The record gives the reactivity of an RNA of 177 nucleotides to DMS and 2A3. The DMS profile rests on 13,524 reads. Values cover nucleotides 27 to 126. DMS adducts were read by reverse transcription with MarathonRT. For 2A3 the reverse transcriptase was SuperScript II with manganese. For 2A3, 10,847 sequencing reads were counted. Values are in units of 0.01, from 0 to 300, in steps of 10. Conditions: 150 mM KOAc, 10 mM MgCl2 and 150 mM bicine (pH 8.5), 24 C. Source: RMDB library M2PK50, as collected in RNAgym.
RNA sequence: GGGAACGACUCGAGUAGAGUCGAAAAGUACAAUGUUUCGACAUUGUACGAUGGAGCCAAAGCCGAAAGGCAUUUUAAUCCUUGGCUGGCGAUAGCCUAAAAGAAGAAUCCAUUUCGAUGGAUUCAAUAACAUCUUUAGGUUCGCCUAAAGAUGUUAAAAAGAAACAACAACAACAAC
Reactivity to DMS in 0.01 (KOAc 150mM, MgCl2 10mM, bicine 150mM(pH8.5), 24C), signal-to-noise 8, nucleotides 027 to 126: g010u000a000c000a000a010u000g010u000u010u020c180g020a060c000a000u000u000g010u000a000c000g010a100u000g000g010a230g020c030c040a030a100a130g010c010c010g010a080a060a090g010g020c200a060u000u000u010u000a110a150u010c040c020u000u000g000g010c010u000g010g010c050g000a160u010a070g010c000c010u000a040a040a080a100g000a130a120g000a010a000u000c000c000a010u000u000u010c150g010a010u000g000g000a010u000u000c010a060a080
Reactivity to 2A3 in 0.01 (KOAc 150mM, MgCl2 10mM, bicine 150mM(pH8.5), 24C), signal-to-noise 6, nucleotides 027 to 126: g010u000a000c000a000a000u000g010u000u080u090c120g020a010c000a000u000u010g000u000a000c010g000a040u060g060g060a020g000c020c000a090a110a010g010c010c020g160a150a040a010g020g000c010a010u010u010u010u060a080a050u060c010c000u010u050g010g000c020u020g000g010c040g080a100u110a070g020c000c010u080a090a090a010a040g150a090a020g000a000a010u000c000c000a000u040u060u130c200g050a010u010g000g000a000u000u000c000a000a010